[RMDB]
This 177-nucleotide RNA was probed chemically with DMS and 2A3. Values cover nucleotides 27 to 126. DMS adducts were read by reverse transcription with MarathonRT. 2A3 adducts were read by reverse transcription with SuperScript II with manganese. The DMS profile rests on 11,304 reads.
RNA sequence: GGGAACGACUCGAGUAGAGUCGAAAAUGAUGACCAACAUGGCUAGCACAGCCCGUUGCUUGGGGGUGCCCGAUGGCACCGGGGUGCCGUCGAUAGUCAUCUGCAAUGGUCCAAGCAGGCCGAAGUCAAUUACCUAACACUUCGGUGUUAGGUAAUUAAAAGAAACAACAACAACAAC
Reactivity to DMS in 0.01 (KOAc 150mM, MgCl2 10mM, bicine 150mM(pH8.5), 24C), signal-to-noise 8, nucleotides 027 to 126: u010g000a080u010g010a070c020c040a070a140c150a080u000g010g010c020u000a140g020c070a080c170a170g000c030c000c050g020u000u000g010c080u000u000g020g010g000g000g010u000g000c040c170c030g010a050u010g010g020c000a020c010c080g020g000g020g020u010g020c010c040g010u010c020g010a160u000a070g010u000c010a010u000c040u010g020c130a060a070u010g010g020u000c000c050a100a150g010c050a200g000g010c020c020g010a120a120g010u010c140
Reactivity to 2A3 in 0.01 (KOAc 150mM, MgCl2 10mM, bicine 150mM(pH8.5), 24C), signal-to-noise 2, nucleotides 027 to 126: u110g030a030u070g030a010c020c020a020a190c030a140u100g000g020c020u020a050g030c040a020c030a070g160c020c000c010g070u080u110g050c050u090u110g040g000g000g030g040u060g030c000c020c010g030a050u060g000g010c010a000c030c040g080g150g010g010u010g010c000c000g010u000c000g010a010u060a040g020u030c000a020u000c040u020g020c020a020a100u090g020g010u010c030c010a080a000g020c020a020g040g000c010c020g040a090a010g070u110c050